[RMDB]
RNA sequence: GGGAACGACUCGAGUAGAGUCGAAAAGAUAUGGACAAAGGGAGAUUUAAGGUGCUAAGACAGUCUCACCUAUCGGAAACGAUAGGUGAGAUCGAGCACCGGAGAUCGAAGAACUUUGUCCUAAGUCGCCUAAUGAUGAGUUCGCUCAUCAUUAGGCAAAAGAAACAACAACAACAAC
Reactivity to DMS in 0.01 (KOAc 150mM, MgCl2 10mM, bicine 150mM(pH8.5), 24C), signal-to-noise 1, nucleotides 027 to 126: g010a040u000a300u000g010g000a010c000a030a000a000g010g000g120a120g000a020u000u000u000a300a300g000g010u000g000c000u000a300a100g080a230c300a140g000u000c000u000c000a000c000c010u000a000u000c010g050g000a040a130a240c000g000a000u000a000g000g010u000g000a000g010a000u000c010g040a020g000c000a020c000c000g000g040a150g000a000u000c000g000a110a280g010a120a140c000u000u000u000g000u000c000c000u000a040a070g000u000c070